[RMDB]
RNA sequence: GGGAACGACUCGAGUAGAGUCGAAAAGCCAACCGCAAUGGAUGGCCCUUGUUCAUUAUGAAGCAUUAGAACAUUUCUGAAACAACCUUUUGUUCUAAGAAGUGUAAUAAGUAGUCUGGGCUACCUGCUUCGCCCAUAAGUUCGCUUAUGGGCGAAGAAAAGAAACAACAACAACAAC
Reactivity to 2A3 in 0.01 (KOAc 150mM, MgCl2 10mM, bicine 150mM(pH8.5), 24C), signal-to-noise 1, nucleotides 027 to 126: g070c020c030a020a080c040c030g060c150a070a100u130g000g040a170u010g000g000c000c000c000u040u090g100u050u020c050a070u050u160a050u140g100a040a000g010c080a080u000u060a010g020a030a000c000a000u080u130u000c110u140g080a140a160a100c030a050a060c050c030u120u240u080u080g010u000u000c030u040a020a090g040a170a010g050u050g000u130a010a000u010a050a010g070u120a020g090u000c030u060g000g000g000c000u010a010c000c000u060g000
Reactivity to DMS in 0.01 (KOAc 150mM, MgCl2 10mM, bicine 150mM(pH8.5), 24C), signal-to-noise 1, nucleotides 027 to 126: g000c070c000a080a080c140c080g000c140a090a060u000g000g010a090u000g020g000c010c020c020u000u000g010u000u000c080a120u030u000a090u010g000a090a150g020c010a170u010u000a040g060a250a010c010a000u000u000u000c020u020g010a110a090a030c040a030a050c300c130u000u020u000u000g000u000u000c010u010a130a010g000a060a060g020u010g040u010a050a100u000a050a010g000u000a080g010u010c090u000g020g010g010c000u000a060c030c090u010g000
Source information:
An RNA of 177 nucleotides, treated with 2A3 and DMS and read out base by base. The RNA was probed in 150 mM KOAc, 10 mM MgCl2 and 150 mM bicine (pH 8.5) at 24 C. For 2A3, 943 sequencing reads were counted. Reactivities are given for positions 27 through 126. The data come from the RNA Mapping Database (RMDB), library OK2TRN. The DMS profile rests on 756 reads.